Chemical mapping of a 177-nucleotide RNA with DMS and 2A3. Values are in units of 0.01, from 0 to 300, in steps of 10.

RNA sequence: GGGAACGACUCGAGUAGAGUCGAAAAUAUGCCCCUAGAGGCGUACAGAUGGGGCUGCUGUGCCUCAUUUGUGUCAUAUGGUGGCAUAGAGCAAAAGGCUAUGUCUACGCUCGGUGUUCUCAGUCCAACGUUCUUCUGGUUUCGACCAGAAGAACGUAAAAGAAACAACAACAACAAC
Reactivity to DMS in 0.01 (KOAc 150mM, MgCl2 10mM, bicine 150mM(pH8.5), 24C), signal-to-noise 2, nucleotides 027 to 126: u000a010u000g010c000c000c000c010u000a130g010a110g000g000c010g040u060a070c030a000g010a010u000g030g000g000g000c000u020g040c180u040g010u060g020c000c000u000c000a050u000u000u000g090u000g000u000c000a040u000a170u030g010g000u070g020g090c010a000u000a030g010a000g010c000a030a130a190a060g080g000c040u000a060u020g000u000c060u000a160c300g000c000u000c000g040g000u030g010u000u000c060u000c020a170g080u000c160c180a120
Reactivity to 2A3 in 0.01 (KOAc 150mM, MgCl2 10mM, bicine 150mM(pH8.5), 24C), signal-to-noise 4, nucleotides 027 to 126: u040a000u000g010c000c000c010c000u020a030g030a110g190g030c060g080u120a010c000a000g010a030u010g000g000g030g000c000u050g070c090u210g150u290g000c000c000u000c000a000u000u020u010g000u020g000u000c010a040u060a040u270g030g020u130g020g000c000a000u000a010g030a010g020c050a030a080a060a030g250g010c030u080a070u250g070u000c030u050a030c060g000c010u000c010g000g000u020g010u050u000c010u000c010a040g090u070c020c040a040
High 2A3 reactivity points to a flexible backbone, as in loops and unpaired stretches.